[RMDB]
The record gives the reactivity of an RNA of 207 nucleotides to 2A3.

RNA sequence: GGGAACGACUCGAGUAGAGUCGAAAAGAAAGAAAGAAAUUAGCUCGCCAGUUAGCGAGGUCUGUCCCCACACGACAGAUAAUCGGGUGCAACUCCAGCCCCUUUUCCGAGGGUCAUCGGAACCAAAAAAACUCAGGCAACUUCGGUUGCCUGAGAAGAUGAUAUCGGUCUUCGGACCGAUAUCAUCAAAAGAAACAACAACAACAAC
Reactivity to 2A3 in 0.01 (KOAc 150mM, MgCl2 10mM, bicine 150mM(pH8.5), 24C), signal-to-noise 1, nucleotides 027 to 156: g050a030a010a010g060a030a050a010g070a040a150a000u100u040a120g000c000u000c000g040c040c060a240g120u150u140a010g010c000g010a010g000g000u000c000u000g030u000c050c060c000c000a030c000a000c030g010a000c000a010g030a030u060a080a140u160c060g070g000g000u070g010c010a070a000c000u010c050c000a050g000c000c000c000c040u050u220u050u000c010c000g000a000g000g060g100u090c040a030u010c000g010g000a010a020c010c070a080a110a040a030a040a030a030c010u010c000a010g000g010c000a010a010c010u040u060c080g060g000u010u000g000c010c000u000g000a000g000a000a000

The reactions ran in a buffer of 150 mM KOAc, 10 mM MgCl2 and 150 mM bicine (pH 8.5), at 24 C.